RNA sequence: GGGAACGACUCGAGUAGAGUCGAAAAGGGCGAAGGGCUGGGUUGCGCACGUCCUAGAGUGGAGGGCAAUGCGUGAGGCUGGCUUCACAGAGCAGCGACUACCUCCCGCUCUCGGCAGUGGAAGGAUAACGGGCCGGUGCUACCUGGGUCCACCAUGCAUUGCCUAUCUCUUCGGAGAUAGGCAAUGAAAAGAAACAACAACAACAAC
Reactivity to 2A3 in 0.01 (KOAc 150mM, MgCl2 10mM, bicine 150mM(pH8.5), 24C), signal-to-noise 1, nucleotides 027 to 156: g070g010g020c110g080a150a050g000g010g050c040u100g000g000g000u000u040g000c010g000c040a080c050g030u060c000c020u020a140g020a000g000u050g000g010a020g020g040g000c030a080a170u070g000c000g000u020g070a050g080g070c070u060g010g010c000u120u110c130a080c020a100g050a000g030c000a020g010c000g030a060c040u120a080c000c000u030c000c000c000g000c010u000c000u000c030g050g000c030a040g020u030g030g020a020a080g040g030a040u060a220a100c110g030g030g000c010c010g000g000u030g030c000u030a040c060c040u050g020g000g010u060c020c000a030c090c000a000u090g030